[RMDB]
RNA sequence: GGGAACGACUCGAGUAGAGUCGAAAAUGAUGAAGACAGCGAUCCGGCACAGUCAAUUAUUGAACAAACGGCAGGUCACCGGGGCGUGGAUGCAGUAAUAGACGCCGUCGGUUUUGAAGCGAAAGGCGUACUGAUAGCGAUUCGUCGCUAUCAGUACAAAAGAAACAACAACAACAAC
Reactivity to DMS in 0.01 (KOAc 150mM, MgCl2 10mM, bicine 150mM(pH8.5), 24C), signal-to-noise 6, nucleotides 027 to 126: u010g000a070u000g020a120a080g000a070c080a070g020c050g000a070u010c040c040g010g000c050a080c140a130g010u010c040a080a090u010u000a080u000u000g010a070a070c110a060a100a080c110g010g010c050a050g020g010u010c080a060c050c020g000g010g010g010c020g020u000g000g010a130u000g010c050a080g000u010a040a050u000a120g010a050c030g010c080c060g000u000c030g020g010u000u000u010u010g010a090a100g010c040g000a040a070a100g000g010c150
Reactivity to 2A3 in 0.01 (KOAc 150mM, MgCl2 10mM, bicine 150mM(pH8.5), 24C), signal-to-noise 4, nucleotides 027 to 126: u120g040a020u080g030a040a030g080a020c030a020g010c030g030a040u050c030c020g020g030c030a030c030a050g050u020c000a030a030u130u080a090u090u120g060a060a020c020a050a080a000c050g050g010c030a010g000g050u090c040a030c070c030g030g020g020g000c030g010u030g020g040a040u070g030c020a010g030u070a030a050u050a100g060a020c030g020c010c030g070u050c000g030g000u010u000u070u150g030a040a010g060c040g080a080a040a030g090g010c070